Chemical mapping of a 207-nucleotide RNA with 2A3. The reactions ran in a buffer of 150 mM KOAc, 10 mM MgCl2 and 150 mM bicine (pH 8.5), at 24 C. It was measured as part of the RMDB library OK3TST.
RNA sequence: GGGAACGACUCGAGUAGAGUCGAAAAGAAGGUGGGUCAGGGCUCGGACCGCACCCAUUAGAUGUAACUAUUGCGAGCCCAUUAAUGGCGUUUUCGCCUAGGUCAGAGCACGCCGUGGCUCGACCCAAAUAAAUAAAUAAUACCACGGCGGAUAGAACCACUAAUAUAUAUUCGUAUAUAUUAGUGGAAAAGAAACAACAACAACAAC
Reactivity to 2A3 in 0.01 (KOAc 150mM, MgCl2 10mM, bicine 150mM(pH8.5), 24C), signal-to-noise 1, nucleotides 027 to 156: g170a030a050g000g010u010g000g020g000u010c000a000g000g020g000c000u000c000g000g030a030c000c030g040c000a000c000c000c000a080u150u290a000g110a140u150g020u220a090a090c130u090a070u140u230g030c000g000a000g000c040c050c000a000u000u140a010a080u040g000g000c010g110u020u010u190u300c010g040c010c030u000a020g000g000u000c080a110g010a000g010c000a000c070g000c020c020g000u000g010g000c000u000c010g000a000c000c010c040a080a130a040u100a080a110a000u130a010a030a050u180a050a100u080a020c060c000a000c030g000g000c070g010g000a100u150a030g140a050a000